[RMDB]
RNA sequence: GGGAACGACUCGAGUAGAGUCGAAAACACCACUUCAUAUCUUUUAAUUCAUGAUGGGGACCGUGCAGUGAUUACAUAUGAGGGGGACUCCAGUGCUGGGUAUAAUCAUGAUGUGUCUAUUUUGCGGUCUUACAUUCAAGUUCGCUUGAAUGUAAGAAAAAGAAACAACAACAACAAC
Reactivity to DMS in 0.01 (KOAc 150mM, MgCl2 10mM, bicine 150mM(pH8.5), 24C), signal-to-noise 5, nucleotides 027 to 126: c120a200c030c030a140c080u010u000c020a030u000a020u000c010u010u000u010u010a060a160u010u000c040a060u010g000a070u010g020g010g020g010a080c050c040g010u000g010c080a070g010u000g010a070u000u010a060c090a050u010a050u000g010a070g000g000g000g010g010a090c070u000c030c040a070g010u000g010c070u000g010g000g020u000a050u000a050a070u000c030a020u000g000a050u000g010u000g010u010c040u000a100u000u000u000u000g000c070g000g000
Reactivity to 2A3 in 0.01 (KOAc 150mM, MgCl2 10mM, bicine 150mM(pH8.5), 24C), signal-to-noise 4, nucleotides 027 to 126: c040a040c000c010a000c020u040u040c030a040u010a050u080c020u070u130u100u160a170a140u130u080c040a050u100g100a050u060g010g000g020g040a020c000c040g030u060g010c020a020g030u040g100a110u090u190a040c040a050u120a090u160g050a080g000g070g000g070g030a000c020u000c010c040a050g070u030g100c060u040g030g000g020u080a070u060a120a060u050c010a030u070g050a040u030g060u010g040u030c020u060a120u070u120u050u080g040c010g010g000
An RNA of 177 nucleotides, treated with DMS and 2A3 and read out base by base. Values are in units of 0.01, from 0 to 300, in steps of 10. 2A3 adducts were read by reverse transcription with SuperScript II with manganese. Conditions: 150 mM KOAc, 10 mM MgCl2 and 150 mM bicine (pH 8.5), 24 C.